[RMDB]
An RNA of 207 nucleotides, treated with 2A3 and read out base by base. It was measured as part of the RMDB library RNAMAK.
RNA sequence: GGGAACGACUCGAGUAGAGUCGAAAAGGGGUCACCUAUAAUCGUAGUGUAACAAGGAGAGCAACAGCUAUAACUGAAGCCUCCACGGUUAUAGACAUGCUCUCCCGCCCACUACGGUAGGUGACGGAGGCACCCAAAACCACCUUUCGAGGUGGAAGCGCGGUACAGAAUUCGUUCUGUACCGCGCAAAAGAAACAACAACAACAAC
Reactivity to 2A3 in 0.01 (KOAc 150mM, MgCl2 10mM, bicine 150mM(pH8.5), 24C), signal-to-noise 1, nucleotides 027 to 156: g060g030g030g010u030c040a030c000c010u090a110u120a300a060u100c010g000u000a010g000u030g070u140a050a200c070a150a080g000g000a000g000a020g000c020a020a140c050a090g070c000u020a000u000a000a000c000u020g110a170a040g010c010c000u030c000c000a010c000g010g000u010u000a010u000a000g050a150c020a090u070g000c000u000c000u020c000c000c010g030c030c010c010a010c010u000a000c010g000g000u000a010g010g010u000g000a000c010g000g000a000g000g020c020a060c020c030c000a060a070a040a090c000c000a000c020c000u070u170u250c300g110a000g020g000u000g000g000a000a040

Values cover nucleotides 27 to 156. The reactions ran in a buffer of 150 mM KOAc, 10 mM MgCl2 and 150 mM bicine (pH 8.5), at 24 C.